[RMDB]
RNA sequence: GGGAACGACUCGAGUAGAGUCGAAAACUGAAGCUCAACCCGCUCAAAGAGGUGAUCCGCGGCAAGCGGCUCAUCGUCGUCGACGACUCGAUCGUGCGGGGCAACACCCAGCGUGCGCUGGUACGCACUAGUUCUGGAGGUUCGCCUCCAGAACUAGAAAAGAAACAACAACAACAAC
Reactivity to DMS in 0.01 (KOAc 150mM, MgCl2 10mM, bicine 150mM(pH8.5), 24C), signal-to-noise 2, nucleotides 027 to 126: c080u000g000a110a110g010c030u000c070a090a200c090c050c100g000c020u000c080a070a080a130g020a070g000g000u000g000a010u000c020c010g020c030g000g010c240a110a150g010c010g010g000c150u000c020a040u000c030g000u000c130g000u010c110g010a030c090g010a120c030u000c010g010a070u020c100g000u000g010c070g030g070g000g000c060a040a040c060a180c070c010c010a060g000c080g010u000g010c050g000c090u000g010g030u030a060c040g030c010a260
Reactivity to 2A3 in 0.01 (KOAc 150mM, MgCl2 10mM, bicine 150mM(pH8.5), 24C), signal-to-noise 1, nucleotides 027 to 126: c020u040g080a070a020g070c020u040c060a080a100c010c050c000g040c010u050c020a090a120a010g060a010g000g050u040g020a000u000c020c000g010c010g110g100c170a120a030g000c000g000g010c000u010c000a010u020c000g150u030c020g080u050c050g070a070c020g020a050c020u050c100g060a080u030c050g000u040g000c010g000g050g000g000c020a030a020c020a070c060c000c020a000g030c010g020u090g040c070g000c160u150g100g050u080a030c060g010c010a020
This 177-nucleotide RNA was probed chemically with DMS and 2A3. Values are in units of 0.01, from 0 to 300, in steps of 10. The 2A3 profile rests on 1,622 reads. The data come from the RNA Mapping Database (RMDB), library OK2TRN. Conditions: 150 mM KOAc, 10 mM MgCl2 and 150 mM bicine (pH 8.5), 24 C.